[RMDB]
Structure probing data (2A3) for a 207-nucleotide construct. The reactions ran in a buffer of 150 mM KOAc, 10 mM MgCl2 and 150 mM bicine (pH 8.5), at 24 C. For 2A3 the reverse transcriptase was SuperScript II with manganese. The 2A3 profile rests on 527 reads.
RNA sequence: GGGAACGACUCGAGUAGAGUCGAAAACGUGCGACCCGUGAAGCGGGUGACGCAGGGCAUAGGCGUGCAAACCGUGGACGUGCACAUGACGCCGGUGGAAGAACUUUACCGACCGCCGCCCUACGCUUACCGUUCCGCCGCUCCUCGCUACUAUCGACUACAUCCAGGAGUUCGCUCCUGGAUGUAGAAAAGAAACAACAACAACAAC
Reactivity to 2A3 in 0.01 (KOAc 150mM, MgCl2 10mM, bicine 150mM(pH8.5), 24C), signal-to-noise 1, nucleotides 027 to 156: c060g030u030g090c030g020a030c010c000c050g000u100g160a030a010g300c030g050g000g010u010g000a010c040g030c050a010g020g000g000c090a120u120a170g010g000c070g000u080g000c050a110a030a000c070c050g010u030g020g020a050c060g030u080g000c110a030c040a050u110g020a030c050g000c010c000g000g000u000g000g020a140a150g070a060a050c070u200u170u150a160c090c000g010a020c000c000g060c000c000g050c000c000c010u010a020c000g040c010u080u070a070c000c000g030u120u000c000c000g000c000c000g020c000u020c000c000u070c040g090c040u040a090c040u030a030u130c020g000a030